[RMDB]
RNA sequence: GGGAACGACUCGAGUAGAGUCGAAAAAGAGGCGAUACGUCGCCUCAAGCUUGGUGCUUAGCUUCUUUCACCAAGCAUAUUACACGCGGAUAACCGCCAAAGGAGAAACACUUACUACGGUCAGUGAGGAAGUUGGUUCGGUUCGCCGAACCAACAACCUAUAUCCAUGCUUCGGCAUGGAUAUAGGAAAAGAAACAACAACAACAAC
Reactivity to 2A3 in 0.01 (KOAc 150mM, MgCl2 10mM, bicine 150mM(pH8.5), 24C), signal-to-noise 5, nucleotides 027 to 156: a000g000a010g000g000c010g010a010u020a060c220g130u010c010g020c000c000u000c000a000a010g010c000u000u000g000g000u020g020c050u060u040a060g060c000u020u020c010u010u020u010c000a000c000c000a000a000g000c010a000u040a020u040u150a050c080a010c030g030c010g000g030a070u090a280a280c000c010g000c030c030a070a040a010g030g000a010g020a000a130a000c020a000c010u020u010a000c010u030a020c120g070g000u010c020a000g010u010g040a030g060g070a130a080g010u000u010g000g000u000u000c000g000g030u020u030c180g030c040c000g000a000a000c010c000a000a000c000a000a000
Reactivity to DMS in 0.01 (KOAc 150mM, MgCl2 10mM, bicine 150mM(pH8.5), 24C), signal-to-noise 2, nucleotides 027 to 156: a080g010a000g000g000c010g030a060u000a050c230g020u010c010g050c010c000u000c010a040a030g000c030u000u000g010g020u000g000c090u010u000a070g020c120u010u000c000u000u000u000c000a050c000c030a000a040g020c020a080u000a040u000u000a110c060a100c070g030c010g000g030a220u010a190a090c010c000g000c020c070a040a060a110g000g000a080g020a100a150a050c090a080c040u000u010a020c020u010a090c100g020g000u010c050a040g000u010g010a100g040g000a070a130g000u000u000g010g020u000u000c010g020g020u000u010c300g050c010c000g000a030a000c000c000a000a000c000a020a030